[RMDB]
RNA sequence: GGGAACGACUCGAGUAGAGUCGAAAAGAUAUGGACUACCCACCCGUUGGUUCGAGGCUCUCGGAAACGAGAGCUACCCACCGAACUGACGGAGGUCCUAAGUCAAAGAUCCUCUUCGGAGGAUCAAGAUGAAUGAAGGCUUCGGCCUUCAUUCAUCAAAAGAAACAACAACAACAAC
Reactivity to DMS in 0.01 (KOAc 150mM, MgCl2 10mM, bicine 150mM(pH8.5), 24C), signal-to-noise 1, nucleotides 027 to 126: g080a060u000a120u060g000g010a020c000u000a180c010c000c000a300c070c000c000g000u000u000g010g000u000u000c030g000a010g060g000c000u000c000u010c000g000g100a080a080a300c000g010a010g000a020g000c000u010a000c070c030c140a300c080c010g000a000a000c000u000g000a030c000g000g020a000g000g010u000c000c000u020a020a160g000u010c110a100a100a060g000a030u000c000c000u000c000u000u000c170g000g010a010g000g020a010u000c000a060a160